Chemical mapping of a 177-nucleotide RNA with 2A3 and DMS. 2A3 adducts were read by reverse transcription with SuperScript II with manganese. Conditions: 150 mM KOAc, 10 mM MgCl2 and 150 mM bicine (pH 8.5), 24 C. It was measured as part of the RMDB library OK2TRN.
RNA sequence: GGGAACGACUCGAGUAGAGUCGAAAAUCAGAUGAGACUAGACAUCAGACUAGAUAGUAUCACACUACAGGUACAUAGUAGAGACAUACAUAGAUGUGUAUGACACAUCAGAGGCGCGGGCCACCGAGCCCUAUUACGGCUUCGGCCGUAAUAGGGCAAAAGAAACAACAACAACAAC
Reactivity to 2A3 in 0.01 (KOAc 150mM, MgCl2 10mM, bicine 150mM(pH8.5), 24C), signal-to-noise 2, nucleotides 027 to 126: u070c010a010g020a100u060g020a020g060a010c040u070a010g030a050c010a030u040c050a030g060a080c040u020a030g060a170u070a060g050u020a020u100c020a020c030a030c080u130a040c000a040g000g080u050a020c010a040u090a010g030u030a020g030a020g000a070c020a040u110a020c020a030u120a080g060a030u050g010u000g010u070a160u280g090a050c000a000c000a030u000c040a010g010a070g080g030c040g000c080g020g020g010c000c030a020c020c010g020a020
Reactivity to DMS in 0.01 (KOAc 150mM, MgCl2 10mM, bicine 150mM(pH8.5), 24C), signal-to-noise 3, nucleotides 027 to 126: u000c040a130g020a100u000g010a080g020a100c050u000a050g010a120c020a040u000c060a080g020a120c080u000a090g030a150u010a070g010u000a060u010c070a090c130a070c040u000a020c060a050g010g010u000a030c110a090u000a060g020u000a070g000a120g000a100c150a060u000a040c080a080u010a100g010a040u000g000u010g000u010a100u000g020a130c070a030c020a040u000c000a080g000a110g000g020c060g010c080g010g020g020c020c070a070c050c100g020a120

The DMS profile rests on 2,181 reads.